[RMDB]
RNA sequence: GGGAACGACUCGAGUAGAGUCGAAAAGGCAGGAAUAGAAUGGGCCGAAUCUAGUGUGACACUGCAGGCCAAAUGCUAUUUUUGUUUGGCGCAAGGCCUGGUGGCUGAGGCGGCUGUGUUCACCAAGCAAUAUUAUAUUAUUCGUAAUAUAAUAUUGAAAAGAAACAACAACAACAAC
Reactivity to 2A3 in 0.01 (KOAc 150mM, MgCl2 10mM, bicine 150mM(pH8.5), 24C), signal-to-noise 4, nucleotides 027 to 126: g040g000c030a020g020g070a070a040u090a100g060a030a040u100g020g020g000c000c000g000a010a020u050c010u020a040g040u020g020u040g120a010c010a000c040u100g020c050a030g020g100c010c010a110a130a000u000g010c000u020a080u050u080u010u090u150g210u100u070u130g020g000c010g000c090a070a030g090g000c000c020u000g000g020u020g010g000c000u020g000a000g050g000c000g000g000c000u030g020u020g000u040u040c000a020c010c010a010a000g040
Reactivity to DMS in 0.01 (KOAc 150mM, MgCl2 10mM, bicine 150mM(pH8.5), 24C), signal-to-noise 8, nucleotides 027 to 126: g010g020c020a050g010g010a090a080u020a060g010a080a080u020g010g000g000c010c010g010a090a090u040c050u010a040g020u030g020u010g000a070c020a010c010u000g010c020a030g010g010c000c000a010a070a070u000g010c010u000a010u010u010u030u030u040g010u000u020u010g000g000c010g020c130a100a250g010g010c010c010u000g010g010u010g000g000c010u000g000a270g010g010c020g000g000c020u010g010u010g000u020u010c010a020c020c040a120a100g000
This 177-nucleotide RNA was probed chemically with 2A3 and DMS. The RNA was probed in 150 mM KOAc, 10 mM MgCl2 and 150 mM bicine (pH 8.5) at 24 C. For DMS the reverse transcriptase was MarathonRT. It was measured as part of the RMDB library OK1LIB.